[RMDB]
RNA sequence: GGGAACGACUCGAGUAGAGUCGAAAACCUGGUUUAGGGUUCCAGGCUAGCCCUAUCUAUCGGUCGAGAUGCGAGCGCUUAAGCUCAAAUUGAGUGGCUGAGUUAGUGGUGAACGUAUUCCUAUGUUAAAACGGUAGCUGCUUCGGCAGCUACCGAACAGUAUUAGGCAGUUCGCUGCCUAAUACUGAAAAGAAACAACAACAACAAC
Reactivity to DMS in 0.01 (KOAc 150mM, MgCl2 10mM, bicine 150mM(pH8.5), 24C), signal-to-noise 1, nucleotides 027 to 156: c000c000u000g050g000u000u000u010a080g040g000g000u000u000c000c020a120g040g120c010u010a220g010c010c010c000u000a000u000c040u010a080u000c010g020g040u000c040g010a300g010a030u000g000c300g010a060g000c040g050c220u000u020a110a120g000c000u010c000a030a270a040u000u010g040a250g050u000g030g020c040u050g000a100g000u000u000a030g000u020g000g010u000g000a050a070c090g000u010a080u000u010c010c000u000a160u030g000u000u000a020a070a160a220c030g040g000u000a000g000c000u020g010c010u000u000c280g060g000c040a010g010c020u010a000c000c040g020a010a030
Reactivity to 2A3 in 0.01 (KOAc 150mM, MgCl2 10mM, bicine 150mM(pH8.5), 24C), signal-to-noise 2, nucleotides 027 to 156: c000c010u000g000g030u060u060u170a140g010g040g000u090u040c000c000a010g000g040c020u020a030g000c000c000c000u000a030u000c020u020a120u060c020g010g000u020c020g010a030g010a120u070g030c000g000a010g000c040g040c130u290u250a180a070g000c010u020c020a030a040a000u020u030g010a020g010u250g030g010c000u000g000a000g010u010u040a040g000u100g110g010u030g040a080a000c060g030u080a080u080u010c010c000u030a120u170g070u100u150a020a150a030a040c010g000g000u010a000g010c000u000g000c000u040u050c160g080g000c000a000g010c010u000a000c000c000g010a000a000